An RNA of 177 nucleotides, treated with 2A3 and DMS and read out base by base. Values cover nucleotides 27 to 126. For 2A3, 1,112 sequencing reads were counted. Values are in units of 0.01, from 0 to 300, in steps of 10. For DMS the reverse transcriptase was MarathonRT. For 2A3 the reverse transcriptase was SuperScript II with manganese. It was measured as part of the RMDB library M2PK90.
[RMDB]
RNA sequence: GGGAACGACUCGAGUAGAGUCGAAAAUUAAAUGAUGUAGUACGGCCGCCACUGAAGGACGGGUCCUCUCCGAAAGGAGAGUUGAGUAGAGUGUGAGCAGGACCGGGUGCAAGUCACUGGUGAAAAACACAAGUUAACACUUCGGUGUUAACUUGUGAAAAGAAACAACAACAACAAC
Reactivity to 2A3 in 0.01 (KOAc 150mM, MgCl2 10mM, bicine 150mM(pH8.5), 24C), signal-to-noise 1, nucleotides 027 to 126: u120u050a060a100a140u150g070a030u100g020u120a060g060u020a020c030g030g000c000c010g040c020c000a040c020u040g070a130a040g030g030a050c020g000g000g040u000c010c000u010c000u000c000c000g090a090a050a020g000g000a000g000a010g010u000u030g010a040g020u080a030g000a010g030u060g020u030g020a000g000c020a070g010g040a000c000c020g030g000g000u030g010c080a060a060g050u040c010a020c060u070g020g000u080g040a080a030a040a010a000
Reactivity to DMS in 0.01 (KOAc 150mM, MgCl2 10mM, bicine 150mM(pH8.5), 24C), signal-to-noise 3, nucleotides 027 to 126: u000u020a060a110a100u010g000a060u000g020u010a100g010u010a120c040g000g000c010c020g020c020c020a080c050u000g030a090a070g010g010a050c050g000g000g010u010c070c000u000c000u000c000c000g000a040a100a140g000g010a020g000a010g010u000u000g000a140g020u000a050g000a110g010u000g000u000g010a100g010c040a090g000g010a070c050c040g000g020g000u000g000c070a040a110g020u000c040a030c070u000g000g020u000g000a050a070a050a090a150